An RNA of 207 nucleotides, treated with 2A3 and DMS and read out base by base. For DMS, 6,484 sequencing reads were counted. For DMS the reverse transcriptase was MarathonRT. It was measured as part of the RMDB library OK3TST. Reactivities are rounded to 0.1 and cut off at 0 and 3. Conditions: 150 mM KOAc, 10 mM MgCl2 and 150 mM bicine (pH 8.5), 24 C.
RNA sequence: GGGAACGACUCGAGUAGAGUCGAAAAACUUCUGGUCUCGGAUUAGGCGUCGUUACGUAUAUAUCCACCAAUCCGAGACAAUGGAUGUAGUAGUUCGUAUUCUUGGACGGACGUAUCCGUUUAUCCACAAUUAGAUAUUUUAGUAGACGUAAGUCUAACUGAAUCUCUAGUUCGCUAGAGAUUCAGUAAAAGAAACAACAACAACAAC
Reactivity to 2A3 in 0.01 (KOAc 150mM, MgCl2 10mM, bicine 150mM(pH8.5), 24C), signal-to-noise 5, nucleotides 027 to 156: a010c040u130u070c040u130g070g010u010c000u000c000g020g000a010u020u060a220g030g000c040g050u100c060g040u160u090a090c060g090u060a090u030a030u020a030u290c020c030a020c010c010a010a000u000c000c000g000a020g020a020c030a000a010u020g000g020a010u030g010u110a090g040u000a030g010u060u050c070g000u060a180u150u110c090u090u130g090g030a000c000g000g020a000c030g010u020a030u030c020c000g010u030u100u000a040u030c020c000a030c030a090a070u090u100a040g050a110u070a150u110u170u080u090a100g040u030a020g010a000c010g010u030a070a060g000u000c000u010a020
Reactivity to DMS in 0.01 (KOAc 150mM, MgCl2 10mM, bicine 150mM(pH8.5), 24C), signal-to-noise 2, nucleotides 027 to 156: a080c050u000u010c020u000g020g010u010c010u010c010g000g010a050u000u000a120g050g020c060g020u000c130g000u000u000a090c130g020u010a080u010a110u000a060u000c020c010a050c010c000a030a040u000c010c020g010a070g010a020c000a030a050u000g010g010a050u000g010u000a100g020u000a130g040u000u010c040g030u000a130u000u010c090u000u020g030g000a030c030g020g000a050c050g020u000a030u000c030c040g020u010u000u000a060u010c020c020a050c070a100a120u010u000a040g000a060u000a030u000u000u010u000a120g030u000a040g000a040c020g010u000a060a130g020u000c020u000a040